The data come from the RNA Mapping Database (RMDB), library RFM100. An RNA of 177 nucleotides, treated with 2A3 and DMS and read out base by base. The RNA was probed in 150 mM KOAc, 10 mM MgCl2 and 150 mM bicine (pH 8.5) at 24 C. For DMS, 2,389 sequencing reads were counted.

[RMDB]
RNA sequence: GGGAACGACUCGAGUAGAGUCGAAAAUACAAGAAUCCCCGCUUUUCUAUGCCGUGGAUCCAGCGACUCCCCAAGGAUGCCAAAAACCUGAGAGAAGAAGUAGUGAGGAAGGCCAACCUUUAUUAGCCACACGAAAACUGUUCGCAGUUUUCGUGUGAAAAGAAACAACAACAACAAC
Reactivity to 2A3 in 0.01 (KOAc 150mM, MgCl2 10mM, bicine 150mM(pH8.5), 24C), signal-to-noise 2, nucleotides 027 to 126: u210a000c050a000a030g100a080a050u020c000c010c000c010g040c000u080u140u020u080c010u060a100u180g040c060c010g030u070g050g030a030u010c020c010a000g020c020g040a070c020u050c000c000c000c000a030a010g080g020a030u150g070c020c060a030a000a050a030a040c010c000u050g020a010g020a020g000a140a010g020a040a010g050u100a010g030u070g130a020g010g040a040a020g010g040c010c010a040a030c110c010u060u040u020a140u060u110a070g020c020
Reactivity to DMS in 0.01 (KOAc 150mM, MgCl2 10mM, bicine 150mM(pH8.5), 24C), signal-to-noise 2, nucleotides 027 to 126: u050a140c120a120a090g020a120a090u010c000c000c010c070g000c060u010u010u000u030c080u000a040u010g010c000c020g060u000g000g020a080u030c000c050a070g000c060g000a090c110u000c010c000c000c050a060a050g010g030a070u000g000c030c040a000a100a030a110a070c040c000u010g000a090g000a100g020a050a070g030a080a060g000u020a040g030u000g000a110g000g010a020a080g000g020c000c080a000a050c030c000u010u010u020a040u000u030a080g030c110